[RMDB]
The record gives the reactivity of an RNA of 207 nucleotides to DMS and 2A3. Values are in units of 0.01, from 0 to 300, in steps of 10. The RNA was probed in 150 mM KOAc, 10 mM MgCl2 and 150 mM bicine (pH 8.5) at 24 C. 2A3 adducts were read by reverse transcription with SuperScript II with manganese.
RNA sequence: GGGAACGACUCGAGUAGAGUCGAAAAACGAGUCGUACGCGACUCGAAUGGUAUUGUCGGCGUAAAAGAACAAGACGUCACCGCACGCGACCGGGCUAAAAAGCGAAACGUCAUCUACGGAUGACGAAAAACGGACCUGGGUUCGCCCAGGUCCGAAGCUCAUUAUUGAGUUCGCUCAAUAAUGAGCAAAAGAAACAACAACAACAAC
Reactivity to DMS in 0.01 (KOAc 150mM, MgCl2 10mM, bicine 150mM(pH8.5), 24C), signal-to-noise 1, nucleotides 027 to 156: a200c030g000a040g000u000c000g010u000a110c220g000c030g000a050c020u000c010g010a020a060u010g050g010u000a080u000u000g020u000c040g020g030c080g020u000a050a070a100a140g000a090a050c020a080a080g000a110c040g000u010c030a110c080c060g000c040a070c010g030c020g000a160c100c020g030g010g000c040u000a030a030a060a060a080g000c020g000a040a120a200c030g010u000c000a000u000c010u000a170c200g100g010a010u000g000a010c010g000a010a010a020a090a140c000g010g000a000c000c000u010g000g020g060u010u010c300g000c000c000c010a000g000g000u000c010c010g000a000a060
Reactivity to 2A3 in 0.01 (KOAc 150mM, MgCl2 10mM, bicine 150mM(pH8.5), 24C), signal-to-noise 4, nucleotides 027 to 156: a000c000g000a000g010u000c010g010u060a050c230g000c010g120a010c000u000c000g000a010a050u070g020g030u100a090u090u140g100u080c020g030g030c030g020u060a060a060a070a090g110a150a040c060a110a010g070a050c020g010u050c040a020c060c040g020c020a030c030g020c000g010a030c040c040g020g020g000c030u080a100a040a020a010a010g050c040g060a120a040a020c010g000u000c000a000u000c000u010a030c190g100g010a000u000g010a000c010g030a050a010a000a000a010c010g000g000a000c000c000u010g020g000g020u030u040c110g050c000c000c010a000g000g010u020c000c000g000a000a000
Reactivities are given for positions 27 through 156.